[RMDB]
Source: RMDB library OK2TRN, as collected in RNAgym. Chemical mapping of a 177-nucleotide RNA with 2A3 and DMS. DMS adducts were read by reverse transcription with MarathonRT. Conditions: 150 mM KOAc, 10 mM MgCl2 and 150 mM bicine (pH 8.5), 24 C.
RNA sequence: GGGAACGACUCGAGUAGAGUCGAAAAGUGCACCUGGAACAUCUACAUCAUCUGAAAUUCCUAUGGAAGAACAAAUAGAAAUGGGGCUAUCUGAUGGAUUAAUACGUUUUUCAAUAGGUUUAGACAAUAUUGUUCUGUAUUUCGAUACAGAACAAUAAAAAGAAACAACAACAACAAC
Reactivity to 2A3 in 0.01 (KOAc 150mM, MgCl2 10mM, bicine 150mM(pH8.5), 24C), signal-to-noise 3, nucleotides 027 to 126: g050u030g060c040a050c050c000u020g020g060a030a030c010a060u030c000u060a050c020a070u100c020a020u020c050u060g060a080a160a130u070u000c000c010u020a020u050g020g020a010a020g000a050a000c030a040a140a040u140a090g100a030a080a040u100g040g000g020g000c010u030a030u020c020u070g060a080u110g100g030a020u090u160a080a040u140a090c050g000u000u020u050u010u020c010a040a030u020a040g040g000u060u040u030a050g030a040c020a050a120
Reactivity to DMS in 0.01 (KOAc 150mM, MgCl2 10mM, bicine 150mM(pH8.5), 24C), signal-to-noise 6, nucleotides 027 to 126: g010u010g010c070a070c030c010u000g010g020a100a080c070a060u000c040u000a070c110a050u010c060a070u000c060u010g000a100a080a110u000u000c010c010u000a030u000g000g010a060a050g000a030a040c030a070a120a090u010a080g000a060a070a090u000g010g000g000g010c070u000a050u000c050u000g010a090u010g020g010a150u000u010a060a080u010a070c150g010u000u000u000u000u000c020a040a040u000a030g010g010u000u000u000a070g010a110c170a060a110